RNA sequence: GGGAACGACUCGAGUAGAGUCGAAAAGAGCGCAGUGAUGUGGCCACUGGUACCGACGGCCGCGCCGAUCUAGUGACAGGCGCAUGGCGCGAUAUGCGCGGAUCUGCGCGUGAUCACGAUAGUACGGGUACGAACCAGGUUUCGACCUGGUUCGUACAAAAGAAACAACAACAACAAC
Reactivity to 2A3 in 0.01 (KOAc 150mM, MgCl2 10mM, bicine 150mM(pH8.5), 24C), signal-to-noise 1, nucleotides 027 to 126: g080a030g010c050g000c030a010g050u000g060a120u110g020u070g080g060c000c000a050c060u050g030g020u070a100c060c060g020a050c040g060g000c000c000g000c010g030c030c020g030a070u060c020u080a020g050u010g110a000c010a060g030g020c000g000c020a070u090g030g000c020g000c030g100a130u080a070u220g020c010g000c000g020g040a090u060c010u100g000c010g030c030g000u040g000a110u000c030a000c070g090a110u110a030g070u130a050c030g120g000
Reactivity to DMS in 0.01 (KOAc 150mM, MgCl2 10mM, bicine 150mM(pH8.5), 24C), signal-to-noise 3, nucleotides 027 to 126: g010a160g000c050g030c010a030g010u030g000a190u000g030u000g020g010c010c000a080c080u020g010g000u000a120c050c020g020a100c080g020g000c010c010g010c030g000c010c060g010a190u010c050u010a110g010u010g000a040c110a110g010g020c010g010c000a050u010g020g000c020g020c000g000a200u020a080u010g010c000g000c000g020g000a090u000c110u000g020c000g010c000g000u000g000a150u010c050a030c030g000a170u000a070g010u010a110c070g000g000
Overview:
Structure probing data (2A3 and DMS) for a 177-nucleotide construct. Reactivities are given for positions 27 through 126. Values are in units of 0.01, from 0 to 300, in steps of 10. The reactions ran in a buffer of 150 mM KOAc, 10 mM MgCl2 and 150 mM bicine (pH 8.5), at 24 C. Source: RMDB library OK2TRN, as collected in RNAgym.